[RMDB]
RNA sequence: GGGAACGACUCGAGUAGAGUCGAAAACGGAGCUUGCGAAGGCUCACGGCGCGUUCUUCGAUCUCGUGACGGGCCAACCGGGCGAGAAGUUCGUUCACAUGAAUCAGCCGGUCGCGAACGCGGCGGCCCCUGACAUUAACUUCGGUUAAUGUCAGGGAAAAGAAACAACAACAACAAC
Reactivity to 2A3 in 0.01 (KOAc 150mM, MgCl2 10mM, bicine 150mM(pH8.5), 24C), signal-to-noise 5, nucleotides 027 to 126: c030g030g000a010g010c020u040u070g030c100g060a090a000g030g000c010u020c050a070c010g030g030c020g010c000g040u030u000c020u050u070c020g050a070u010c020u020c040g060u030g130a190c020g000g010g030c060c010a050a150c020c020g010g050g010c030g010a020g000a050a020g040u070u030c020g020u050u060c030a050c030a180u180g110a100a080u080c030a030g040c020c020g120g030u080c000g000c020g050a140a040c100g010c000g040g000c000g020g030c000
Reactivity to DMS in 0.01 (KOAc 150mM, MgCl2 10mM, bicine 150mM(pH8.5), 24C), signal-to-noise 5, nucleotides 027 to 126: c070g010g010a030g020c020u000u000g010c300g000a210a050g010g000c010u000c010a120c040g010g000c070g000c010g020u020u000c050u000u000c020g000a080u000c020u000c040g000u000g010a100c040g020g000g000c090c190a080a180c060c040g000g000g020c010g010a040g000a070a160g010u000u000c020g010u000u000c040a080c060a070u020g020a090a090u010c120a100g010c030c030g010g030u000c020g040c300g000a040a030c070g020c010g000g010c020g010g000c070
This 177-nucleotide RNA was probed chemically with 2A3 and DMS.
Reactivities are given for positions 27 through 126.
The DMS profile rests on 4,600 reads.
The reactions ran in a buffer of 150 mM KOAc, 10 mM MgCl2 and 150 mM bicine (pH 8.5), at 24 C.